[RMDB]
RNA sequence: GGGAACGACUCGAGUAGAGUCGAAAAGAAUGAAUAAUGGUGUCACGGCUCUGGAGCCGCUCCCGAGCCGCGGCUAACGCUAUCUGAAGGGCGGCUCAGAAAUAGAAGCGAGAAGAAGACUCGCAGAAUUACUCAGGUGGUUCGCCACCUGAGUAAUAAAAGAAACAACAACAACAAC
Reactivity to 2A3 in 0.01 (KOAc 150mM, MgCl2 10mM, bicine 150mM(pH8.5), 24C), signal-to-noise 2, nucleotides 027 to 126: g030a030a180u140g040a060a020u130a110a090u240g160g020u090g000u000c000a010c010g000g000c010u030c030u110g030g000a000g010c020c000g040c000u030c000c000c010g020a000g000c000c010g000c000g000g000c020u060a090a000c070g000c030u060a080u150c090u200g060a070a020g000g000g010c000g010g000c000u030c030a020g110a010a180a010u200a050g040a100a010g000c000g010a000g000a110a060g010a030a020g050a070c010u000c000g000c000a000g020a010
Reactivity to DMS in 0.01 (KOAc 150mM, MgCl2 10mM, bicine 150mM(pH8.5), 24C), signal-to-noise 2, nucleotides 027 to 126: g020a100a140u010g010a110a120u030a130a020u040g010g020u000g030u000c000a030c020g000g000c040u000c000u040g000g000a090g020c050c030g030c030u000c000c020c020g000a020g010c020c000g050c070g000g080c010u040a050a100c090g010c110u000a050u060c060u000g060a300a130g000g030g020c000g000g000c010u010c050a120g010a120a090a070u050a090g010a180a120g000c000g000a020g010a170a100g020a180a100g000a100c010u000c010g000c000a050g030a130
This 177-nucleotide RNA was probed chemically with 2A3 and DMS. Source: RMDB library OK1LIB, as collected in RNAgym. The 2A3 profile rests on 1,724 reads. The RNA was probed in 150 mM KOAc, 10 mM MgCl2 and 150 mM bicine (pH 8.5) at 24 C.